[RMDB]
RNA sequence: GGGAACGACUCGAGUAGAGUCGAAAACUCGCCCGGGCCUUCGAGGAACUGGGCGUGCCGGAGCGGGUGGAGGCGGUGAGGGGCGGGGAGGCCUGGCAGGACGACGUGGCCUUCGUGUACGGUGAGGAAUGUAGUUUCGAUUCGUCGAAACUACAUUAAAAGAAACAACAACAACAAC
Reactivity to DMS in 0.01 (KOAc 150mM, MgCl2 10mM, bicine 150mM(pH8.5), 24C), signal-to-noise 1, nucleotides 027 to 126: c020u000c000g020c020c000c000g000g000g000c010c000u000u070c200g000a160g000g000a050a070c020u000g050g020g000c000g000u010g000c080c050g000g000a130g030c210g000g090g000u040g000g000a090g000g050c120g010g010u000g000a120g010g010g010g000c120g000g040g000g010a040g000g010c000c000u000g010g010c040a110g020g010a070c130g010a040c050g000u020g000g000c020c020u000u010c090g010u010g020u010a150c040g020g020u000g010a150g000g000
Reactivity to 2A3 in 0.01 (KOAc 150mM, MgCl2 10mM, bicine 150mM(pH8.5), 24C), signal-to-noise 1, nucleotides 027 to 126: c010u000c010g010c000c000c000g100g000g000c050c060u130u120c190g070a300g020g040a300a160c030u050g000g000g000c000g030u010g020c020c030g060g030a140g000c100g000g080g030u170g060g050a080g040g100c120g000g060u240g100a050g010g000g050g150c120g000g000g000g000a040g000g000c000c000u000g070g040c040a070g070g050a010c110g010a010c050g040u090g020g000c000c090u040u060c050g020u050g020u030a050c020g050g030u040g040a070g030g120
Source information
This 177-nucleotide RNA was probed chemically with DMS and 2A3. For 2A3, 826 sequencing reads were counted. The RNA was probed in 150 mM KOAc, 10 mM MgCl2 and 150 mM bicine (pH 8.5) at 24 C. For DMS the reverse transcriptase was MarathonRT. The data come from the RNA Mapping Database (RMDB), library OK2TST.